Chemical mapping of a 177-nucleotide RNA with DMS and 2A3. Source: RMDB library OK2TRN, as collected in RNAgym. For 2A3 the reverse transcriptase was SuperScript II with manganese. The 2A3 profile rests on 33,846 reads. The reactions ran in a buffer of 150 mM KOAc, 10 mM MgCl2 and 150 mM bicine (pH 8.5), at 24 C.
RNA sequence: GGGAACGACUCGAGUAGAGUCGAAAAGGCGCCGAGUCGGUCCUGUGGUGGCGUGGGUGCACCCGGCCGGGCCGACUGCGUUGCUCGCUUGCGAACAUAGUCUCCGUUCCGACGACGCGGCAGUGGCAGGUAUAUAUCAUUUCGAUGAUAUAUACCUAAAAGAAACAACAACAACAAC
Reactivity to DMS in 0.01 (KOAc 150mM, MgCl2 10mM, bicine 150mM(pH8.5), 24C), signal-to-noise 9, nucleotides 027 to 126: g010g010c020g010c050c090g000a030g010u000c000g010g000u000c000c010u000g020u010g010g020u000g010g020c070g020u010g010g010g020u010g010c060a070c020c010c070g010g010c120c080g010g000g010c010c010g000a030c010u000g010c030g020u000u000g010c060u000c040g010c070u000u000g020c060g010a040a060c070a110u010a130g000u000c050u000c070c050g000u000u000c030c020g010a080c050g000a080c070g020c040g000g010c040a060g010u000g000g020c140
Reactivity to 2A3 in 0.01 (KOAc 150mM, MgCl2 10mM, bicine 150mM(pH8.5), 24C), signal-to-noise 9, nucleotides 027 to 126: g050g010c020g000c020c030g020a000g010u000c010g000g010u020c000c000u040g090u160g020g050u080g040g070c120g030u140g090g130g080u260g060c020a050c010c010c010g040g010c010c010g010g020g000c010c010g020a010c000u010g010c020g050u070u110g010c030u020c030g040c060u060u120g030c060g030a060a020c020a110u150a080g080u030c040u010c090c030g020u050u010c020c020g030a050c020g000a010c050g020c000g050g000c020a030g030u080g050g020c050